Overview:
This 177-nucleotide RNA was probed chemically with DMS and 2A3. For DMS, 679 sequencing reads were counted. Source: RMDB library OK2TRN, as collected in RNAgym. For 2A3 the reverse transcriptase was SuperScript II with manganese. For 2A3, 1,332 sequencing reads were counted.

[RMDB]
RNA sequence: GGGAACGACUCGAGUAGAGUCGAAAAUAUCGCAUACGCUAUAUACGCCGCAUAUAUCGCCGCUAUCGCUAUGCGUAUCGCCGCGCGGCGUAUGCGCGCCGCUAUGCGAUAAUAUAUCGCGCGUAUGCUCCCUCGUCCCAUUCGUGGGACGAGGGAGAAAAGAAACAACAACAACAAC
Reactivity to DMS in 0.01 (KOAc 150mM, MgCl2 10mM, bicine 150mM(pH8.5), 24C), signal-to-noise 1, nucleotides 027 to 126: u010a180u000c140g010c000a030u000a010c010g010c040u010a190u010a030u000a100c060g040c180c040g000c000a010u040a100u000a030u010c100g010c050c080g000c030u000a110u000c060g010c060u020a080u000g030c020g010u010a030u000c090g040c120c110g020c180g000c000g060g000c020g010u000a000u000g000c020g000c090g030c120c080g000c080u000a020u000g020c000g040a020u000a030a080u000a090u000a040u020c050g010c080g000c000g010u000a000u000g010
Reactivity to 2A3 in 0.01 (KOAc 150mM, MgCl2 10mM, bicine 150mM(pH8.5), 24C), signal-to-noise 1, nucleotides 027 to 126: u080a030u030c060g000c000a000u010a030c090g000c060u020a020u020a010u020a300c080g020c010c000g000c070a010u090a010u000a000u200c000g000c030c000g030c020u080a030u180c030g050c100u100a080u300g020c010g020u010a100u100c020g030c120c000g050c020g000c000g030g030c000g010u000a000u010g010c000g010c050g020c010c020g000c010u000a000u040g000c000g000a000u020a010a010u150a000u040a010u040c020g030c000g000c000g060u010a020u080g040